[RMDB]
RNA sequence: GGGAACGACUCGAGUAGAGUCGAAAAGGAAUCGUUCGCGAUUCCAAAAAGAUAUGGAACGUGCGUACGAGGCAUUGGAGGUCGGAAACGACUACCCACCCAAUGCUACCCACCGUACGCACGUUCCUAAGUCAAAAAAACUCUCUUCGGAGAGUAAUGUUCUAGUACUAUUCGUAGUACUAGAACAAAAAGAAACAACAACAACAAC
Reactivity to 2A3 in 0.01 (KOAc 150mM, MgCl2 10mM, bicine 150mM(pH8.5), 24C), signal-to-noise 3, nucleotides 027 to 156: g000g000a010a000u020c020g020u100u140c300g050c040g090a030u000u030c000c000a000a090a000a020a000g030a020u060a020u060g000g000a000a000c010g000u000g000c000g000u000a000c000g000a010g000g000c000a000u000u010g010g000a020g000g020u000c010g020g030a070a050a050c020g020a010c000u120a170c040c030c020a040c000c000c000a010a000u000g000c010u050a060c050c060c030a060c010c010g010u000a000c000g000c000a000c000g000u000u000c000c000u000a000a000g000u000c010a000a000a000a000a060a040a070c010u010c000u000c000u050u080c280g060g000a000g010a000g000u030a010a100
Reactivity to DMS in 0.01 (KOAc 150mM, MgCl2 10mM, bicine 150mM(pH8.5), 24C), signal-to-noise 3, nucleotides 027 to 156: g030g020a030a010u000c010g020u000u020c300g040c050g010a040u010u010c010c000a000a040a050a090a120g000a110u020a300u000g000g000a030a010c010g030u000g010c000g020u000a020c020g000a190g030g040c020a010u000u040g010g000a160g020g020u000c000g030g010a170a090a230c020g020a040c030u000a040c030c010c040a300c170c000c000a010a030u000g000c010u010a030c010c010c010a300c210c020g000u000a010c010g020c000a000c000g010u000u000c000c000u000a000a060g010u010c000a000a000a070a080a060a070a120c010u010c010u000c000u000u000c300g000g000a050g010a030g020u000a020a040